This 177-nucleotide RNA was probed chemically with DMS. Conditions: 150 mM KOAc, 10 mM MgCl2 and 150 mM bicine (pH 8.5), 24 C. The data come from the RNA Mapping Database (RMDB), library TTRINS.
[RMDB]
RNA sequence: GGGAACGACUCGAGUAGAGUCGAAAAGAUAUGGACCCUCCUACCCACCCUUGAAACAGCGUUGAAACACAGCUUCGGAAACGAAGCUGUGUGGAGCUGGAGUACGAGGAGGGAGGGUCCUAAGUCACUGACAGUAAUGGUUCGCCAUUACUGUCAGAAAAGAAACAACAACAACAAC
Reactivity to DMS in 0.01 (KOAc 150mM, MgCl2 10mM, bicine 150mM(pH8.5), 24C), signal-to-noise 2, nucleotides 027 to 126: g010a060u000a070u000g000g000a000c000c000c000u000c000c000u000a060c050c050c190a300c050c010c010u000u010g000a300a160a200c000a000g020c000g030u010u030g030a140a190a020c010a010c000a000g010c010u020u000c000g000g000a060a040a040c000g000a020a000g010c000u000g000u000g020u000g000g010a020g020c000u000g000g020a030g020u050a160c290g000a000g010g000a110g050g010g020a000g020g010g040u000c010c000u000a010a050g010u000c040a290